[RMDB]
RNA sequence: GGGAACGACUCGAGUAGAGUCGAAAACGGCAGCGCUUCGCUUCUCCAAAGAAGUCAAAAGGCCAUUGUGACUGAUAGCAUUUUCCAUUGCUGCAAACUUGGGAUUGGCCUCAUAAGCAGCAUACAACUGGGCUACGCAUUUCGAUGCGUAGCCCAGAAAAGAAACAACAACAACAAC
Reactivity to 2A3 in 0.01 (KOAc 150mM, MgCl2 10mM, bicine 150mM(pH8.5), 24C), signal-to-noise 1, nucleotides 027 to 126: c050g000g000c030a100g000c000g000c150u080u080c060g000c050u000u100c020u020c100c100a160a000a030g000a020a000g090u090c040a030a030a030a030g000g000c000c030a020u070u050g070u000g090a080c000u010g000a070u120a020g040c000a100u040u150u000u000c010c030a030u000u080g000c000u000g030c000a190a030a090c050u000u030g000g030g030a030u020u060g040g000c020c000u000c000a100u100a050a060g000c000a000g010c000a000u040a170c030a110a090